RNA sequence: GGGAACGACUCGAGUAGAGUCGAAAAGGGGAAAGCCCAGUCCUGUUUGGAAAGAGUUUCCACACUUCCUUCUCAUUCUGGCUGGAUGGGCUCAGGGAGCUCACCGGGGAGAGGACGUCUCCAUUGAUACUUACCCUGCAUUCGUGCAGGGUAAGUAAAAAGAAACAACAACAACAAC
Reactivity to 2A3 in 0.01 (KOAc 150mM, MgCl2 10mM, bicine 150mM(pH8.5), 24C), signal-to-noise 1, nucleotides 027 to 126: g070g020g010g110a030a120a160g240c010c010c010a000g000u000c000c000u040g110u070u110u050g000g030a100a100a050g120a080g050u000u060u120c100c030a060c000a020c040u070u000c000c000u050u000c030u030c010a040u100u040c020u060g180g000c030u030g040g050a250u030g040g050g000c010u000c020a140g090g060g050a030g020c000u020c000a030c010c020g000g010g030g020a050g000a000g020g010a010c040g080u000c000u000c010c030a110u070u120g000a000
Reactivity to DMS in 0.01 (KOAc 150mM, MgCl2 10mM, bicine 150mM(pH8.5), 24C), signal-to-noise 3, nucleotides 027 to 126: g010g000g000g010a090a070a080g010c070c010c010a090g020u000c000c010u000g010u010u000u000g030g000a020a040a080g000a060g010u000u000u000c100c050a110c180a100c070u000u000c040c020u010u000c030u000c010a110u010u030c070u000g020g010c070u000g000g010a080u000g000g000g010c020u000c100a190g010g020g000a050g000c020u000c020a040c010c000g020g000g000g000a070g010a050g000g000a130c100g000u000c010u010c010c030a120u000u010g010a290